The record gives the reactivity of an RNA of 177 nucleotides to 2A3 and DMS.
For DMS, 1,713 sequencing reads were counted.

[RMDB]
RNA sequence: GGGAACGACUCGAGUAGAGUCGAAAACAGGAAGCGGCCGGGGCAGCCUUGCUCUCCAUAGACGGCUCCCCCCGGUGGAUCCCGUGGCGAUUCCUGAAAAAAGCUGCAUGCCCAAGACCAGACGCCAACCGCUAAUACUCUUCGGAGUAUUAGCGGUAAAAGAAACAACAACAACAAC
Reactivity to 2A3 in 0.01 (KOAc 150mM, MgCl2 10mM, bicine 150mM(pH8.5), 24C), signal-to-noise 2, nucleotides 027 to 126: c000a010g050g020a050a000g010c050g050g000c010c000g000g000g000g000c020a000g010c000c000u110u210g030c030u030c000u040c080c040a060u150a070g050a020c050g020g000c040u030c060c000c000c000c000c000g000g040u040g040g010a050u020c020c020c000g070u090g030g000c030g030a090u020u040c010c020u000g020a170a050a000a000a000a000g080c050u030g010c020a030u060g010c000c000c020a050a000g040a080c030c020a030g020a050c000g000c010c000a000
Reactivity to DMS in 0.01 (KOAc 150mM, MgCl2 10mM, bicine 150mM(pH8.5), 24C), signal-to-noise 2, nucleotides 027 to 126: c030a100g020g000a060a020g000c020g020g030c030c000g060g020g020g040c300a020g010c000c000u000u010g010c040u000c060u000c260c210a120u030a010g020a050c140g000g000c020u000c050c200c010c000c000c010g100g070u000g020g040a100u010c000c010c000g010u010g000g000c110g010a100u000u000c020c000u000g000a020a070a090a050a020a150g000c030u000g000c050a020u020g000c040c010c020a010a090g000a110c020c040a020g000a090c060g010c040c010a180

The reactions ran in a buffer of 150 mM KOAc, 10 mM MgCl2 and 150 mM bicine (pH 8.5), at 24 C. It was measured as part of the RMDB library OK1LIB. For 2A3 the reverse transcriptase was SuperScript II with manganese.